This 207-nucleotide RNA was probed chemically with 2A3.
[RMDB]
RNA sequence: GGGAACGACUCGAGUAGAGUCGAAAAUCGAGUGGACCGUCGGGGGCCUGGAGCUGACCGUCCUCAAGCAGUACGGCGCAGUCAGCGCCAGCGGCGUGAUGCUGCGUUUCGCCGGCGCCUACCAGCAGGACGAUACCGGCGCGGUCACGUCCGUCGACUCGGGGAAAGGAUUCGUCCUUUCCCCGAGAAAAGAAACAACAACAACAAC
Reactivity to 2A3 in 0.01 (KOAc 150mM, MgCl2 10mM, bicine 150mM(pH8.5), 24C), signal-to-noise 1, nucleotides 027 to 156: u070c010g010a030g080u040g000g040a010c040c000g010u030c010g000g050g000g000g000c010c000u070g090g040a070g020c020u020g010a020c000c010g040u040c030c040u040c070a110a100g000c100a000g020u110a020c090g010g040c080g000c020a020g020u140c040a030g010c000g020c070c000a010g000c030g060g000c020g030u110g000a120u170g110c030u080g000c000g010u050u080u170c050g000c040c030g000g000c000g000c000c020u030a080c010c020a060g040c020a000g010g050a070c040g000a010u050a050c000c040g040g010c030g000c000g000g020u040c010a010c020g000u000c070c000g000u060c040g010a040

The RNA was probed in 150 mM KOAc, 10 mM MgCl2 and 150 mM bicine (pH 8.5) at 24 C.